[RMDB]
RNA sequence: GGGAACGACUCGAGUAGAGUCGAAAACAGGUCGAUAGUACCAAUAACCCUGGUACCAAUAAGGUACUAUCGACCAUUUAGCUCUUCUUCUACAACACGCUCGCUGAAGAAGAGCUUUUCAGGUACCAGGGCAGCGAGCGCAAGGCCGAGAGGCCGAAUAUACCAUGAUCUUCGGAUCAUGGUAUAUAAAAGAAACAACAACAACAAC
Reactivity to DMS in 0.01 (KOAc 150mM, MgCl2 10mM, bicine 150mM(pH8.5), 24C), signal-to-noise 2, nucleotides 027 to 156: c020a060g020g070u000c010g030a030u000a040g010u000a020c010c040a150a260u020a180a060c000c010c030u000g010g050u000a050c000c010a120a150u000a080a160g010g000u020a000c000u000a000u000c010g030a040c000c010a030u000u000u000a060g010c010u000c000u010u000c010u000u000c050u000a080c110a100a090c090a050c030g000c020u000c010g070c030u000g000a120a040g010a030a020g000a040g020c010u000u000u000u000c100a140g060g000u000a000c040c010a080g000g010g040c000a020g050c000g020a040g000c030g060c090a100a140g020g030c010c010g010a230g020a300g020g030c030c000g010a150
Reactivity to 2A3 in 0.01 (KOAc 150mM, MgCl2 10mM, bicine 150mM(pH8.5), 24C), signal-to-noise 3, nucleotides 027 to 156: c030a000g000g000u000c000g010a000u000a010g000u000a000c000c050a060a160u180a120a100c020c020c000u010g000g000u010a010c030c030a140a150u230a300a130g000g000u000a000c010u010a010u000c010g000a000c000c000a000u040u040u080a010g000c000u020c000u000u000c000u030u040c010u040a110c050a270a060c080a060c120g000c000u010c000g040c050u030g010a000a000g010a000a000g000a010g010c000u010u000u010u030c010a000g010g000u000a010c000c000a000g010g000g000c000a000g000c020g010a020g000c000g000c060a110a090g010g000c010c000g040a050g030a050g040g000c000c000g000a000